[RMDB]
RNA sequence: GGGAACGACUCGAGUAGAGUCGAAAAGUUUACGCUCCAAGAUCGGUGGAUAGCAGCCCUAUCAAUAUCUACGAGAACUGUGCUAUGUUUAGAAGAUUAGGUAGUCUCUAAACAGAACAAUUUACCUCAUACGUUAGGACGUUCGCGUCCUAACGAAGUAUCCAAAUCACUUCGGUGAUUUGGAUACAAAAGAAACAACAACAACAAC
Reactivity to DMS in 0.01 (KOAc 150mM, MgCl2 10mM, bicine 150mM(pH8.5), 24C), signal-to-noise 2, nucleotides 027 to 156: g000u000u000u000a180c110g000c040u000c070c020a080a100g020a030u000c050g020g000u020g020g020a100u000a090g020c080a130g000c040c040c020u000a130u000c010a080a120u000a060u000c050u000a090c020g020a190g040a030a080c060u000g040u000g030c030u000a180u000g010u000u000u000a010g000a010a150g020a050u000u000a140g030g030u000a110g020u000c000u000c010u000a030a010a020c010a000g000a090a010c020a000a110u010u000u000a040c030c020u010c060a080u000a150c050g000u000u000a000g030g000a010c000g030u000u000c290g030c070g040u000c010c010u000a000a000c000g010a010a100
Reactivity to 2A3 in 0.01 (KOAc 150mM, MgCl2 10mM, bicine 150mM(pH8.5), 24C), signal-to-noise 6, nucleotides 027 to 156: g020u020u070u140a060c070g000c020u050c040c020a060a050g050a140u090c060g060g070u060g050g000a040u030a040g040c070a030g010c030c000c030u090a110u110c060a060a070u040a030u140c040u050a030c050g040a020g020a160a050c060u090g010u030g050c010u040a030u060g010u010u000u000a090g010a300a000g000a010u000u040a010g040g000u030a010g000u000c000u000c000u010a000a000a000c000a020g030a040a020c100a030a030u050u060u070a030c000c000u070c050a100u110a170c000g000u000u000a000g000g000a000c000g010u030u030c200g030c010g060u000c000c000u000a000a000c000g000a000a000